[RMDB]
RNA sequence: GGGAACGACUCGAGUAGAGUCGAAAACCCAGUGAGCUUGAAUCCAUCUGGGAUCACCAGUGGUAAUCCAGGACACAGAAUGUGAUUCUCCGCAAGGAAGUUCUCAACGGAGAGCUCUCUGGUAUUGGUACGAUAAAAAUUUCGAUUUUUAUCGUACAAAAGAAACAACAACAACAAC
Reactivity to 2A3 in 0.01 (KOAc 150mM, MgCl2 10mM, bicine 150mM(pH8.5), 24C), signal-to-noise 9, nucleotides 027 to 126: c010c000c000a000g020u020g020a020g010c040u070u070g100a100a040u080c010c000a040u070c090u080g020g000g050a090u100c050a060c060c010a040g020u030g060g000u040a020a030u000c020c020a030g030g070a070c050a020c020a160g220a160a080u150g070u120g030a070u060u010c060u030c060c010g000c050a100a160g050g020a100a130g070u100u030c030u010c030a080a160c070g020g000a020g010a000g010c000u000c000u000c000u000g040g000u070a120u060u130g090
Reactivity to DMS in 0.01 (KOAc 150mM, MgCl2 10mM, bicine 150mM(pH8.5), 24C), signal-to-noise 9, nucleotides 027 to 126: c060c000c000a030g010u000g000a030g000c020u010u010g000a100a050u010c000c000a040u000c030u000g000g010g000a090u010c130a090c020c000a160g020u020g010g020u010a070a050u000c020c010a130g010g020a100c220a300c030a030g000a080a040u010g020u030g000a050u010u010c000u010c000c010g000c200a130a130g010g010a070a090g000u010u010c000u010c040a150a190c140g000g000a070g000a020g000c010u000c010u000c010u000g000g010u020a090u040u030g010